[RMDB]
RNA sequence: GGGAACGACUCGAGUAGAGUCGAAAAGAGGUGAUAGCUCGAUGCGUUGGCGCUCGCUUCGAGCUGACUAACUCGGAGCGUAGAAGCGCCAGAAUACGCUGCGAGAUAGUCGAAUGAUCGCUUCGAAGGGUUAUGUAUUCUUCGGAAUACAUAACCCAAAAGAAACAACAACAACAAC
Reactivity to DMS in 0.01 (KOAc 150mM, MgCl2 10mM, bicine 150mM(pH8.5), 24C), signal-to-noise 4, nucleotides 027 to 126: g000a020g010g010u000g000a000u000a060g030c030u000c000g000a130u030g000c010g010u000u000g000g040c010g020c000u000c000g040c000u000u000c000g010a010g030c010u000g000a110c210u050a130a190c000u000c000g000g000a000g000c020g000u060a190g000a120a070g030c000g020c010c000a020g000a090a100u040a060c010g020c000u000g010c020g000a040g000a060u020a060g000u000c110g010a200a130u040g000a030u010c010g000c010u000u000c010g000a100a160
Reactivity to 2A3 in 0.01 (KOAc 150mM, MgCl2 10mM, bicine 150mM(pH8.5), 24C), signal-to-noise 4, nucleotides 027 to 126: g010a030g050g020u010g000a020u030a020g050c000u010c000g040a050u040g000c000g020u020u120g020g020c000g000c000u010c000g000c000u000u020c000g000a000g020c010u000g030a020c030u030a060a030c000u000c000g000g000a030g010c020g010u050a070g050a300a040g030c000g000c010c010a000g020a000a010u120a010c010g020c020u110g090c020g000a010g020a010u150a090g190u150c110g050a040a040u210g030a010u030c020g000c010u000u000c030g010a140a070
An RNA of 177 nucleotides, treated with DMS and 2A3 and read out base by base. The DMS profile rests on 8,894 reads. Values cover nucleotides 27 to 126. The 2A3 profile rests on 3,037 reads.